[RMDB]
RNA sequence: GGGAACGACUCGAGUAGAGUCGAAAAUGGUGUUAAGUGGAAUAAGUGGAAAAAUAUACAUAUAUGUACAGGGGGCUACAUAUAUGUAUAUGCCCCCUCGCUACAGUAUAAGUAGGUAUAAGGUGGACCCAUACGAGUGAUUCGUCACUCGUAUGGGAAAAGAAACAACAACAACAAC
Reactivity to 2A3 in 0.01 (KOAc 150mM, MgCl2 10mM, bicine 150mM(pH8.5), 24C), signal-to-noise 2, nucleotides 027 to 126: u200g100g000u100g030u150u120a170a010g000u080g130g090a070a250u070a140a050g040u150g050g060a050a020a000a070a020u060a000u000a000c000a000u000a000u020a050u010g000u000a020c080a090g000g060g000g040g000c000u000a000c000a010u170a000u040a030u150g020u030a010u020a000u010g000c020c020c010c000c010u000c000g000c000u000a000c000a000g150u070a070u020a080a030g050u030a000g080g020u040a100u030a070a080g090g000u000g060g060a040
Reactivity to DMS in 0.01 (KOAc 150mM, MgCl2 10mM, bicine 150mM(pH8.5), 24C), signal-to-noise 2, nucleotides 027 to 126: u030g000g000u000g000u020u010a030a130g000u010g040g010a120a040u040a060a070g000u050g010g000a010a040a060a060a060u010a030u000a000c000a030u000a040u010a040u020g010u000a020c040a090g000g000g010g000g010c100u000a020c080a030u010a010u050a040u060g030u000a000u000a040u010g000c010c000c000c000c020u000c070g010c060u010a030c030a040g030u040a030u010a000a070g000u020a020g000g050u060a020u010a080a070g010g000u020g000g020a290

Structure probing data (2A3 and DMS) for a 177-nucleotide construct. Values cover nucleotides 27 to 126. The reactions ran in a buffer of 150 mM KOAc, 10 mM MgCl2 and 150 mM bicine (pH 8.5), at 24 C.